[RMDB]
RNA sequence: GGGAACGACUCGAGUAGAGUCGAAAACGACUUACCUUCGGGUAAGUCGACAUUGGUGAGUUCAUCGGAUAGCUGCCUAGGUGAGUUCAUCGGAUAGCUGCCACAUGUAACGGUUCGCCGUUACAAAUCUGAAAAGGAGGUUCGCCUCCUUUUCAGAAAAAGAAACAACAACAACAAC
Reactivity to 2A3 in 0.01 (KOAc 150mM, MgCl2 10mM, bicine 150mM(pH8.5), 24C), signal-to-noise 2, nucleotides 027 to 126: c000g000a010c000u010u010a000c020c000u010u100c270g050g000g000u010a010a000g010u000c000g010a010c000a060u080u140g030g020u040g100a050g010u020u030c030a020u020c070g080g010a040u030a110g040c090u080g020c080c010u070a160g000g090u070g110a030g020u050u020c040a010u050c020g020g020a050u080a030g010c040u070g050c000c000a100c010a110u120g010u010a030a000c010g000g040u050u040c200g050c040c000g000u000u010a000c010a020a010a000
Reactivity to DMS in 0.01 (KOAc 150mM, MgCl2 10mM, bicine 150mM(pH8.5), 24C), signal-to-noise 3, nucleotides 027 to 126: c030g010a020c010u000u000a000c000c000u000u000c250g010g010g020u000a000a000g000u000c000g010a030c160a050u010u000g010g020u000g010a020g010u000u000c050a030u010c000g010g000a100u000a070g010c060u000g000c060c020u010a110g030g000u000g010a040g020u000u000c100a010u000c020g010g000a070u000a070g010c050u000g000c020c040a080c300a150u010g010u000a000a030c000g020g010u000u010c250g030c000c010g010u000u000a000c010a030a050a050

Conditions: 150 mM KOAc, 10 mM MgCl2 and 150 mM bicine (pH 8.5), 24 C.
Structure probing data (2A3 and DMS) for a 177-nucleotide construct.
For DMS the reverse transcriptase was MarathonRT.